Chemical mapping of a 177-nucleotide RNA with 2A3 and DMS. 2A3 adducts were read by reverse transcription with SuperScript II with manganese. It was measured as part of the RMDB library TTRDEL. For 2A3, 13,889 sequencing reads were counted. The reactions ran in a buffer of 150 mM KOAc, 10 mM MgCl2 and 150 mM bicine (pH 8.5), at 24 C. Values cover nucleotides 27 to 126.
RNA sequence: GGGAACGACUCGAGUAGAGUCGAAAAGAUAUGGACCGUUAUGGUCGAUAAGCUAACAUCGGAAACGAUGUGUAGCUUUUGACGAACGUCGGUCCUAAGUCAAAACGUGCCUCUUCGGAGGCACGAACUCUGUAGUUACGUUCGCGUAACUACAGAGAAAAGAAACAACAACAACAAC
Reactivity to 2A3 in 0.01 (KOAc 150mM, MgCl2 10mM, bicine 150mM(pH8.5), 24C), signal-to-noise 5, nucleotides 027 to 126: g010a010u040a020u100g010g000a010c000c030g000u130u110a220u300g140g030u010c030g010a110u120a230a000g000c000u000a010a000c000a010u000c000g040g030a040a020a030c030g010a000u010g020u040g100u040a000g000c000u000u010u020u060g030a010c000g020a180a040c080g080u110c050g050g000u000c000c000u010a080a010g020u020c050a020a000a090a160c020g000u000g010c000c000u000c010u050u050c300g110g000a000g000g020c000a000c000g000a000a000
Reactivity to DMS in 0.01 (KOAc 150mM, MgCl2 10mM, bicine 150mM(pH8.5), 24C), signal-to-noise 5, nucleotides 027 to 126: g010a030u000a290u010g000g020a010c010c000g010u020u000a100u010g010g010u000c000g010a020u020a000a020g010c010u010a030a030c000a010u000c000g010g010a090a070a120c000g010a010u010g000u000g010u000a010g010c010u000u000u000u000g010a110c020g010a050a080c210g000u000c020g010g000u000c000c010u000a030a100g000u000c040a090a060a090a160c010g020u000g010c000c000u000c000u000u010c200g030g000a010g010g010c000a000c000g010a010a070